[RMDB]
RNA sequence: GGGAACGACUCGAGUAGAGUCGAAAAGGGAUGAAGUUGCGAAAAGGUUCAACAACAUGUUGGGCUAUGGAGAUGCUAUAUUCUCUAUGACUCCAUCGGAAUUAGUUCAGAACGGUAUCUGUGAUGCCGACAUGCCGGCAUUCGUGCCGGCAUGUCGAAAAGAAACAACAACAACAAC
Reactivity to 2A3 in 0.01 (KOAc 150mM, MgCl2 10mM, bicine 150mM(pH8.5), 24C), signal-to-noise 2, nucleotides 027 to 126: g000g000g000a000u020g010a020a090g010u040u150g120c010g030a010a000a040a050g020g010u020u000c020a000a000c020a000a030c050a100u250g000u000u010g000g030g000c010u010a100u030g050g000a060g010a030u130g070c080u060a020u010a080u300u070c030u010c000u020a050u180g000a030c000u000c000c060a120u080c000g030g060a000a060u180u090a120g030u100u040c020a010g040a070a070c000g050g000u050a040u030c070u020g130u110g070a020u050g050c020
Reactivity to DMS in 0.01 (KOAc 150mM, MgCl2 10mM, bicine 150mM(pH8.5), 24C), signal-to-noise 1, nucleotides 027 to 126: g000g000g000a040u000g000a070a110g000u000u000g020c080g000a080a280a070a260g000g010u000u000c000a000a000c000a090a140c300a120u030g000u000u000g000g000g000c040u000a020u000g000g000a200g010a050u000g000c030u000a080u000a120u030u000c000u000c040u000a110u070g020a040c000u000c000c000a050u000c000g000g000a110a090u000u000a070g000u000u000c020a180g050a040a150c300g020g000u000a000u000c040u000g000u030g000a130u000g010c000